This 177-nucleotide RNA was probed chemically with DMS.

RNA sequence: GGGAACGACUCGAGUAGAGUCGAAAAACGUGCACAGUUGCCCAUAAGGUAGAAUUCAGGCCAGUGGGUAGAGAGAAAUACCGUCACCCACCUGAACAUGGAGUUGAAUUACCGUGUAACCGUUACAAGCAGACAGACAUUUCGAUGUCUGUCUGCUAAAAGAAACAACAACAACAAC
Reactivity to DMS in 0.01 (KOAc 150mM, MgCl2 10mM, bicine 150mM(pH8.5), 24C), signal-to-noise 2, nucleotides 027 to 126: a040c040g000u020g020c080a050c000a180g020u000u010g010c000c020c010a080u010a100a090g020g050u010a070g000a100a100u010u000c020a090g010g020c080c040a150g000u020g020g020g010u000a040g010a120g050a090g010a170a080a130u050a070c070c020g000u010c080a040c000c040c070a040c040c130u000g020a080a050c210a250u000g010g000a090g010u010u000g000a090a040u010u000a010c020c040g000u000g020u010a020a130c090c030g000u000u010a040c190a000